Structure probing data (DMS) for a 177-nucleotide construct. Source: RMDB library RFMREP, as collected in RNAgym. For DMS, 1,542 sequencing reads were counted. For DMS the reverse transcriptase was MarathonRT.
[RMDB]
RNA sequence: GGGAACGACUCGAGUAGAGUCGAAAAUGCGGUCGAGAUAAGCGCUGAAAGCAUCUAAGCGCGAAACUCACCACAAGAUGAGAAUUCCCUUGAAGGUCGUUGUAGACUACAACGUUGAUAGGAUGCACUUUUUACAUGGGUUCGCCCAUGUAAAAAGAAAAGAAACAACAACAACAAC
Reactivity to DMS in 0.01 (KOAc 150mM, MgCl2 10mM, bicine 150mM(pH8.5), 24C), signal-to-noise 2, nucleotides 027 to 126: u000g000c040g010g020u000c120g030a040g020a030u000a110a300g000c000g010c000u000g000a130a110a160g030c010a010u000c010u000a200a040g000c000g010c010g000a060a110a110c010u000c020a030c000c000a020c020a010a070g050a190u020g000a130g020a060a240u000u000c000c000c010u000u000g000a150a110g000g000u000c010g010u000u030g010u000a040g010a080c090u000a060c010a030a020c030g030u000u000g000a090u010a090g010g000a020u000g020c000a300